[RMDB]
RNA sequence: GGGAACGACUCGAGUAGAGUCGAAAAAGCGGAAGUUGAGUAUUACGACAAAACUUCUCCGUCCAUCGACGUUGCUUUCCAGGCAGUCGAUCAGGAUGCACUGAAAGCAAAAUUUGCCGUAAGCAACCAGGCAACAGCUUUUCGAAGCUGUUGCCUGAAAAGAAACAACAACAACAAC
Reactivity to 2A3 in 0.01 (KOAc 150mM, MgCl2 10mM, bicine 150mM(pH8.5), 24C), signal-to-noise 1, nucleotides 027 to 126: a000g030c010g040g010a050a000g000u020u050g010a000g030u020a060u170u290a080c150g030a000c020a010a030a030a030c000u030u020c000u000c090c010g030u080c000c010a050u120c030g060a010c170g160u250u070g000c000u090u040u000c020c070a030g000g000c010a030g030u080c010g050a010u010c000a060g060g030a040u060g000c090a060c210u070g020a050a070a000g000c020a000a050a070a150u050u040u020g070c010c000g010u020a000a030g090c010a000a000c020
Reactivity to DMS in 0.01 (KOAc 150mM, MgCl2 10mM, bicine 150mM(pH8.5), 24C), signal-to-noise 1, nucleotides 027 to 126: a130g000c210g000g000a090a110g050u000u000g020a300g060u040a090u000u000a030c230g010a060c020a020a120a040a030c020u000u010c000u010c070c010g000u000c030c010a190u000c090g000a070c020g080u000u000g000c000u000u010u010c230c130a070g040g010c000a010g030u010c010g050a180u000c190a090g030g000a080u000g000c140a100c060u000g000a090a030a090g000c120a030a120a090a150u000u000u000g010c000c030g000u000a010a030g010c030a070a010c040
Annotation
This 177-nucleotide RNA was probed chemically with 2A3 and DMS. For 2A3 the reverse transcriptase was SuperScript II with manganese. High DMS reactivity at an A or C suggests that its Watson-Crick edge is free. It was measured as part of the RMDB library OK2TST. Conditions: 150 mM KOAc, 10 mM MgCl2 and 150 mM bicine (pH 8.5), 24 C.